[RMDB]
RNA sequence: GGGAACGACUCGAGUAGAGUCGAAAAGCCGUAAAUGCAUCCGGCGAAUAAGAUGCAUGAGCGAAAGCUCUAAGAUAAUUGGCCGUUUGGUAGGGGCCGUAGACCCUACUUAUUAAUGCUCGAGAGGUGUGGAGCGAUCAUCACGCAAGACUAACAACCCUAUAUCGGAUUUCGAUCCGAUAUAGGGAAAAGAAACAACAACAACAAC
Reactivity to DMS in 0.01 (KOAc 150mM, MgCl2 10mM, bicine 150mM(pH8.5), 24C), signal-to-noise 1, nucleotides 027 to 156: g000c000c000g010u000a050a210a050u000g000c020a050u000c020c010g050g060c040g000a050a230u010a070a020g060a000u000g020c040a000u000g000a080g050c040g020a100a090a120g020c010u000c000u010a050a120g000a200u010a130a140u030u000g010g010c000c000g000u010u000u000g000g020u010a070g020g000g010g000c030c130g010u000a060g000a020c000c010c000u000a010c020u020u010a090u020u000a070a040u000g020c070u000c060g040a200g000a080g020g040u000g010u020g020g000a140g050c000g000a150u000c000a100u000c000a100c090g030c020a060a050g000a300c020u010a070a090c020a070a290
Reactivity to 2A3 in 0.01 (KOAc 150mM, MgCl2 10mM, bicine 150mM(pH8.5), 24C), signal-to-noise 2, nucleotides 027 to 156: g000c000c000g020u060a100a080a050u030g000c000a000u010c000c000g010g020c020g030a060a080u140a080a000g000a000u010g000c010a010u030g030a010g000c020g020a100a010a080g000c000u010c020u030a060a030g010a070u070a080a120u120u110g040g000c010c020g020u040u010u120g030g000u000a010g000g000g040g010c040c040g010u010a040g040a090c000c000c020u010a010c000u000u000a020u060u120a070a070u060g030c010u000c120g050a040g010a020g050g000u050g030u070g070g030a010g040c010g020a040u050c030a020u030c010a010c030g010c040a080a020g020a090c040u100a130a010c040a060a070

The record gives the reactivity of an RNA of 207 nucleotides to DMS and 2A3.
For 2A3, 1,341 sequencing reads were counted.
For DMS, 1,636 sequencing reads were counted.